[RMDB]
Chemical mapping of a 207-nucleotide RNA with 2A3 and DMS. The data come from the RNA Mapping Database (RMDB), library OK3TST.
RNA sequence: GGGAACGACUCGAGUAGAGUCGAAAAAACACCACCAUAUUGACCAGUAGUUGGUGAAGUAAGAGUAAUCAUAAGCGAACUAUACGUGUUAUAAAGCACAAACGUAGUCCUAGCAUCACCGUAAAAAGCGUCAAUAGCUGGAUAAACUCCAACAUACAAAGAAGAAACUGUUCGCAGUUUCUUCUUUAAAAGAAACAACAACAACAAC
Reactivity to 2A3 in 0.01 (KOAc 150mM, MgCl2 10mM, bicine 150mM(pH8.5), 24C), signal-to-noise 2, nucleotides 027 to 156: a000a000c100a060c020c000a020c010c000a030u010a010u080u030g020a010c000c030a010g110u090a020g040u220u070g000g010u030g010a040a010g070u190a110a000g060a070g090u130a140a040u090c030a110u060a140a070g070c020g060a050a040c010u000a000u000a090c090g000u030g060u110u110a220u110a170a170a020g000c030a010c010a020a090a000c110g000u000a000g000u000c000c030u020a010g010c000a000u010c000a000c000c000g000u050a000a000a000a120a120g040c080g020u000c010a000a020u020a020g010c060u030g020g000a040u150a080a060a020c040u000c000c030a050a040c050a120u270a040c130
Reactivity to DMS in 0.01 (KOAc 150mM, MgCl2 10mM, bicine 150mM(pH8.5), 24C), signal-to-noise 2, nucleotides 027 to 156: a080a050c050a100c020c010a050c110c050a110u010a060u000u000g000a050c010c000a130g020u000a110g000u000u000g010g020u010g010a060a120g030u000a050a060g010a210g020u010a070a060u000c070a100u010a060a130g000c050g000a040a050c010u000a050u000a060c170g040u010g010u010u000a140u010a110a040a160g020c000a010c050a050a070a100c190g000u010a040g010u000c020c010u010a070g050c010a150u010c010a040c010c010g020u030a040a020a040a120a080g010c120g030u010c050a020a050u000a040g000c050u010g020g000a070u000a040a050a090c080u000c030c010a010a060c050a110u000a100c110

Conditions: 150 mM KOAc, 10 mM MgCl2 and 150 mM bicine (pH 8.5), 24 C.